An RNA of 177 nucleotides, treated with 2A3 and DMS and read out base by base. The reactions ran in a buffer of 150 mM KOAc, 10 mM MgCl2 and 150 mM bicine (pH 8.5), at 24 C.

RNA sequence: GGGAACGACUCGAGUAGAGUCGAAAAAAACUCUGUGCUCAACAGGGCAUACAUUAUAUGUGCGGGAGGGCAUGUGCCGACAUCGAUGCACGUAGGUGACGACAUACUGAUGUCUUGCACGUUAGGCCUGCAAGGUAGACUUCGGUCUACCUUGCAGAAAAGAAACAACAACAACAAC
Reactivity to 2A3 in 0.01 (KOAc 150mM, MgCl2 10mM, bicine 150mM(pH8.5), 24C), signal-to-noise 3, nucleotides 027 to 126: a000a020a010c040u030c030u020g000u010g010c040u040c110a040a060c040a190g000g060g000c030a030u110a040c030a010u090u240a100u160a060u300g050u020g060c080g010g050g020a060g000g040g020c050a050u100g010u000g000c010c010g000a010c010a000u000c020g040a030u020g010c100a060c300g000u060a080g040g250u140g110a020c030g020a030c000a030u120a110c100u190g030a000u020g030u010c010u060u120g000c000a000c040g020u060u090a070g040g100c000
Reactivity to DMS in 0.01 (KOAc 150mM, MgCl2 10mM, bicine 150mM(pH8.5), 24C), signal-to-noise 3, nucleotides 027 to 126: a050a080a040c030u000c020u000g000u000g000c130u010c070a120a160c140a110g000g010g020c030a040u000a040c130a080u000u000a090u000a140u010g020u000g000c070g000g010g000a100g000g000g010c090a050u010g020u000g040c010c300g000a100c020a020u010c000g010a030u000g020c090a060c040g010u000a100g010g020u000g000a180c040g000a270c040a000u000a050c120u000g000a040u010g000u000c000u000u010g000c000a010c020g020u020u000a090g020g010c070
Values cover nucleotides 27 to 126. 2A3 adducts were read by reverse transcription with SuperScript II with manganese.